[RMDB]
RNA sequence: GGGAACGACUCGAGUAGAGUCGAAAAAUGACAUAUUCGUAUGUCAUCAACCUCCUAAGUCCGUUUGACGGUAAUUGUCAGAUGCUAUCGGAAACGAUAGACAUCUUGGAUUUAUUACCCGAGGAUAUGGAUUAUCUGCCCCAUUUCGAUGGGGCAAGAGAUAUCUGAACUUCGGUUCAGAUAUCUCAAAAGAAACAACAACAACAAC
Reactivity to 2A3 in 0.01 (KOAc 150mM, MgCl2 10mM, bicine 150mM(pH8.5), 24C), signal-to-noise 7, nucleotides 027 to 156: a000u000g000a000c000a000u030a030u080u100c250g140u080a000u030g020u000c000a010u020c000a020a150c010c010u040c000c010u080a160a050g020u000c010c010g080u080u150u200g070a070c030g000g000u000a010a010u010u020g020u010c000a000g000a010u000g010c000u000a000u000c000g060g060a170a060a060c010g000a000u010a010g050a300c000a000u000c010u010u100g090g010a000u120u200u170a010u030u020a010c000c000c010g020a020g000g010a010u030a060u090g010g000a030u180u070a130u180c110u060g010c010c000c010c000a020u070u140u130c190g040a020u010g000g000g000g000c000a000a000
Reactivity to DMS in 0.01 (KOAc 150mM, MgCl2 10mM, bicine 150mM(pH8.5), 24C), signal-to-noise 3, nucleotides 027 to 156: a030u000g010a040c010a000u000a020u000u010c300g050u000a000u000g000u000c000a010u000c060a140a120c110c070u000c020c010u010a130a190g030u000c000c010g020u000u000u020g010a300c160g010g000u000a000a020u000u000g020u000c000a060g020a010u000g020c010u000a000u000c000g010g000a220a110a300c000g020a020u000a000g020a110c020a000u000c000u000u000g030g020a010u000u000u000a020u010u000a000c010c000c000g000a300g000g000a010u000a050u010g050g010a100u000u000a080u000c060u000g020c010c000c010c000a040u000u010u000c280g010a040u000g000g010g060g050c010a010a000